[RMDB]
RNA sequence: GGGAACGACUCGAGUAGAGUCGAAAAGCGGUCCAGUACGCUGGACCGCAAUAAAAUCAGCGGUAAAUAAUUAGCAGGCGUUACCGCUGAACGCCUGCAUAAAGCGGCUCAUUACGAUGAGCCGCAAUACCCCGUGACUAUUCGUAGUCACGGGGUAAAAAGAAACAACAACAACAAC
Reactivity to 2A3 in 0.01 (KOAc 150mM, MgCl2 10mM, bicine 150mM(pH8.5), 24C), signal-to-noise 1, nucleotides 027 to 126: g000c020g010g010u000c000c000a000g000u170a040c290g030c080u000g000g000a000c000c000g000c000a010a010u020a000a000a000a040u040c000a000g030c000g130g120u240a120a070a000u140a010a210u100u180a020g000c000a000g020g010c000g040u050u060a130c070c000g000c000u000g000a000a000c000g020c000c000u010g000c000a020u070a000a100a000g010c020g020g000c000u000c010a000u000u100a010c110g100a000u020g000a020g000c030c000g000c000a000a000